[RMDB]
Conditions: 150 mM KOAc, 10 mM MgCl2 and 150 mM bicine (pH 8.5), 24 C. This 177-nucleotide RNA was probed chemically with 2A3 and DMS. It was measured as part of the RMDB library OK2TST. 2A3 adducts were read by reverse transcription with SuperScript II with manganese. The DMS profile rests on 1,362 reads.
RNA sequence: GGGAACGACUCGAGUAGAGUCGAAAACGCUGCUUGGUUUCACGAGCCUAGAGGCCCAUGGUAUCCUGGCUAAACCUGCUGCUAGCGAUGUCACGUUGCGGGGUUUUCGCAGUGCCGAGGCUGAGUCUCAGCCUGCUGUGUUCGCACAGCAGGCUGAAAAAGAAACAACAACAACAAC
Reactivity to 2A3 in 0.01 (KOAc 150mM, MgCl2 10mM, bicine 150mM(pH8.5), 24C), signal-to-noise 1, nucleotides 027 to 126: c030g010c100u100g020c040u040u080g030g020u130u090u120c040a040c080g050a050g000c000c020u060a050g040a010g100g060c030c010c000a050u050g020g000u090a080u150c030c000u050g050g000c010u080a090a020a190c030c020u060g030c030u050g050c040u050a040g000c030g110a060u050g090u090c020a010c100g140u100u080g060c020g000g020g030g020u040u010u000u150c030g040c000a000g030u000g040c000c020g020a060g050g050c060u010g050a100g080u000c080
Reactivity to DMS in 0.01 (KOAc 150mM, MgCl2 10mM, bicine 150mM(pH8.5), 24C), signal-to-noise 1, nucleotides 027 to 126: c140g010c050u020g020c000u020u000g030g000u020u000u000c060a120c080g000a040g030c070c070u010a070g010a080g010g000c020c020c030a080u000g030g000u030a000u010c060c040u000g000g070c030u000a050a090a090c070c040u000g010c030u010g010c040u000a030g030c050g000a060u000g000u000c060a040c040g020u000u000g010c010g000g030g010g010u010u000u010u000c070g010c020a090g010u000g010c020c060g000a070g020g020c030u010g000a100g000u000c100